[RMDB]
RNA sequence: GGGAACGACUCGAGUAGAGUCGAAAAGAAAGAAAGCAAGCAGACUCAGAGCCCAAAUGAGCCGCGUUAACCUCAUCUCAGCGGCAGAGAUGAUUAGGACGCAUACGUCCAAAGGGCUCUGACAAAAAGCACGCUAAUGGUUCGCCAUUAGCGUGCUAAAAGAAACAACAACAACAAC
Reactivity to 2A3 in 0.01 (KOAc 150mM, MgCl2 10mM, bicine 150mM(pH8.5), 24C), signal-to-noise 2, nucleotides 027 to 126: g040a000a130a000g050a080a110a030g010c100a020a020g000c010a010g040a090c040u000c000a000g000a010g020c000c000c000a090a180a050u170g030a000g000c040c020g000c010g030u060u070a040a030c000c050u000c000a040u000c000u030c030a060g050c000g090g000c000a000g000a000g000a000u040g030a020u110u250a070g040g050a000c000g000c020a030u050a210c070g030u020c050c000a020a060a000g000g000g000c000u000c000u000g000a000c020a010a100a000a000
Reactivity to DMS in 0.01 (KOAc 150mM, MgCl2 10mM, bicine 150mM(pH8.5), 24C), signal-to-noise 2, nucleotides 027 to 126: g000a160a210a050g000a130a140a160g160c090a200a010g000c030a030g060a110c180u000c000a000g000a060g000c000c010c000a000a220a190u050g000a260g000c110c140g000c000g000u050u030a150a100c300c120u110c000a060u090c000u020c000a170g030c090g050g050c180a030g000a050g010a030u030g000a000u000u090a210g080g000a010c000g010c140a090u000a000c300g040u000c210c000a050a070a150g000g000g000c000u000c050u000g000a070c300a040a000a060a190